[RMDB]
RNA sequence: GGGAACGACUCGAGUAGAGUCGAAAAUGUUAGAGCGUCUGAUGGAAGAUAUUUCCUAUGACGCCAGCGAAAGCAGUGGUCAAUCUAUCACUAUUGACGCGGAAUACGUUGGUAAGCACUUAGAUGAUACUAGGACCGUGUUCGCACGGUCCUAGUAAAAAGAAACAACAACAACAAC
Reactivity to DMS in 0.01 (KOAc 150mM, MgCl2 10mM, bicine 150mM(pH8.5), 24C), signal-to-noise 1, nucleotides 027 to 126: u010g020u010u000a050g030a280g010c000g000u010c000u000g000a140u000g010g000a000a010g000a300u010a110u030u010u020c000c010u000a240u000g000a030c000g000c020c040a040g030c020g040a080a120a080g050c080a060g000u000g020g000u000c100a050a100u000c040u030a100u000c060a050c110u000a090u000u000g000a180c060g000c050g060g000a110a110u010a040c020g000u000u000g000g040u000a030a080g010c110a030c100u000u000a030g000a050u010g000a210

The record gives the reactivity of an RNA of 177 nucleotides to DMS.